[RMDB]
RNA sequence: GGGAACGACUCGAGUAGAGUCGAAAACCGGUUGCCUGCGCCACUGUUCUGGUGGCGUCUGGCACUGGUGCAAGACAGAGCUGUGCUUCCCCGAGAGUGUGCUAAGCAUUCACUUUGGCUGCUUAGUCGUUUCAAAGCGUUUCGACGCUUUGAAACGAAAAGAAACAACAACAACAAC
Reactivity to DMS in 0.01 (KOAc 150mM, MgCl2 10mM, bicine 150mM(pH8.5), 24C), signal-to-noise 1, nucleotides 027 to 126: c000c000g000g020u010u050g020c000c040u000g000c040g000c000c000a030c000u000g030u050u020c210u080g000g020u000g000g000c000g000u050c060u000g000g000c010a010c000u000g000g000u000g020c170a060a100g000a040c070a090g000a170g020c010u020g000u000g000c060u000u010c000c000c000c090g010a110g000a120g000u030g000u030g000c020u000a000a030g050c000a060u000u010c000a210c220u010u040u020g000g000c080u000g000c000u000u000a020g000u010
Reactivity to 2A3 in 0.01 (KOAc 150mM, MgCl2 10mM, bicine 150mM(pH8.5), 24C), signal-to-noise 3, nucleotides 027 to 126: c000c000g000g000u190u170g010c000c000u000g010c000g030c000c000a010c010u150g080u300u250c140u300g060g010u000g000g000c010g010u000c000u030g000g030c000a000c000u010g000g010u020g000c080a040a000g030a030c070a050g020a010g030c080u090g020u070g110c060u040u030c000c020c000c000g050a060g000a010g160u100g020u080g020c020u010a010a010g000c010a080u060u020c020a020c190u100u040u170g000g010c030u000g020c000u040u010a020g000u020
Chemical mapping of a 177-nucleotide RNA with DMS and 2A3. The reactions ran in a buffer of 150 mM KOAc, 10 mM MgCl2 and 150 mM bicine (pH 8.5), at 24 C. For DMS, 2,161 sequencing reads were counted. For 2A3 the reverse transcriptase was SuperScript II with manganese. Reactivities are rounded to 0.1 and cut off at 0 and 3. For DMS the reverse transcriptase was MarathonRT. Source: RMDB libraries RFM100 and RFMREP, as collected in RNAgym.